[RMDB]
RNA sequence: GGGAACGACUCGAGUAGAGUCGAAAAGUACAGCGUACAGCGCUGGCGCGAGCUCGAUCAGCGCCAGUACACGAUCUCUGAUCGCGCGUGCGGCCAGUACUGAGCGAUCCAUCUAGUACUGCAGGCGGGUAUGAGGUAAAUUCGUUUACCUCAUACCAAAAGAAACAACAACAACAAC
Reactivity to 2A3 in 0.01 (KOAc 150mM, MgCl2 10mM, bicine 150mM(pH8.5), 24C), signal-to-noise 7, nucleotides 027 to 126: g040u030a040c030a050g020c020g020u030a040c040a040g000c010g010c020u000g000g000c010g000c000g030a030g020c030u030c080g070a120u040c040a010g010c010g030c040c010a010g030u050a030c030a010c050g110a110u030c120u000c050u160g010a020u010c000g000c000g010c020g070u200g100c000g060g090c020c010a010g010u010a010c010u020g010a030g020c020g020a050u050c030c010a030u040c040u070a030g020u010a040c010u040g060c060a080g120g030c100g080
Reactivity to DMS in 0.01 (KOAc 150mM, MgCl2 10mM, bicine 150mM(pH8.5), 24C), signal-to-noise 9, nucleotides 027 to 126: g010u000a030c040a110g010c010g020u000a120c030a080g010c040g010c000u000g000g000c000g020c010g000a300g010c050u000c070g000a050u000c040a190g010c130g000c090c030a060g010u010a090c190a120c070g000a050u000c040u010c080u010g000a010u000c000g010c120g010c030g020u000g010c010g010g000c050c040a050g010u000a020c010u010g010a260g010c040g000a070u000c040c070a090u010c080u000a100g010u000a030c020u010g000c120a090g000g010c160g010